Chemical mapping of a 177-nucleotide RNA with 2A3 and DMS. For 2A3 the reverse transcriptase was SuperScript II with manganese. The RNA was probed in 150 mM KOAc, 10 mM MgCl2 and 150 mM bicine (pH 8.5) at 24 C.
RNA sequence: GGGAACGACUCGAGUAGAGUCGAAAAGAUAUGGAAUUCUCCCAAGAUCGACGAUCUCGGAAACGAGGGAGAUCGACGGAGAGAUUCCUAAGUCAAACCAUCGCUCACGUUCGCGUGAGCGAUGGAAGGCUAAAAAUAACUUCGGUUAUUUUUAGCCAAAAGAAACAACAACAACAAC
Reactivity to 2A3 in 0.01 (KOAc 150mM, MgCl2 10mM, bicine 150mM(pH8.5), 24C), signal-to-noise 1, nucleotides 027 to 126: g000a010u070a040u140g020g020a000a000u050u040c000u010c000c000c000a040a010g000a040u010c020g260a280c010g010a060u000c020u000c020g010g030a070a100a080c020g010a010g010g030g000a020g000a000u000c000g020a010c040g000g000a030g040a030g040a040u000u010c000c010u000a150a030g070u040c050a070a060a050c010c010a010u000c010g030c000u040c010a020c030g030u090u030c280g030c030g160u020g020a000g000c000g000a010u020g000g000a000a030
Reactivity to DMS in 0.01 (KOAc 150mM, MgCl2 10mM, bicine 150mM(pH8.5), 24C), signal-to-noise 2, nucleotides 027 to 126: g010a030u040a300u000g000g010a010a010u010u010c010u000c000c000c010a030a300g000a040u000c000g010a120c180g000a070u020c010u000c000g010g000a140a070a170c010g010a020g000g000g000a110g000a020u000c000g000a300c300g000g000a010g010a060g010a030u000u000c000c000u010a050a120g000u020c040a060a130a140c010c010a000u000c010g000c000u020c000a010c010g000u010u020c140g010c010g040u000g000a030g010c000g000a000u000g000g010a020a050